[RMDB]
Description:
Chemical mapping of a 177-nucleotide RNA with DMS and 2A3. For DMS, 1,481 sequencing reads were counted. DMS adducts were read by reverse transcription with MarathonRT. Source: RMDB library OK2TRN, as collected in RNAgym.
RNA sequence: GGGAACGACUCGAGUAGAGUCGAAAAUGGUGCCAUCGCUGACCGCUGUCGAUCCCGCUGGCCGGCCGAUCACACCCGGGCUGCUGUACGGCGACGCCAGGGGUCGGGUACCGAACGCCUCGGUGGCGCGAUCCCGAGUGUUCGCACUCGGGAUCGCAAAAGAAACAACAACAACAAC
Reactivity to DMS in 0.01 (KOAc 150mM, MgCl2 10mM, bicine 150mM(pH8.5), 24C), signal-to-noise 2, nucleotides 027 to 126: u010g010g050u010g040c000c010a060u000c060g040c160u010g000a050c050c030g020c030u000g010u010c040g000a160u010c000c000c020g030c100u000g020g010c020c090g010g010c010c010g050a100u010c150a090c160a120c150c060c020g000g000g020c030u010g000c030u000g010u010a090c040g000g000c080g030a040c050g000c030c010a070g010g000g020g020u000c020g010g000g010u020a100c040c030g000a030a080c120g000c080c030u000c070g020g000u000g020g000c040
Reactivity to 2A3 in 0.01 (KOAc 150mM, MgCl2 10mM, bicine 150mM(pH8.5), 24C), signal-to-noise 2, nucleotides 027 to 126: u120g020g010u090g010c010c010a090u100c020g030c160u070g020a020c020c030g070c300u040g010u050c000g100a300u050c010c000c040g060c040u030g000g020c010c040g010g060c000c000g020a150u160c090a030c000a020c110c020c020g100g030g000c030u030g000c020u020g090u100a120c030g000g000c090g030a030c010g000c010c000a020g090g040g000g020u000c020g030g070g000u040a050c030c000g020a100a050c040g010c000c030u020c040g100g000u020g000g020c040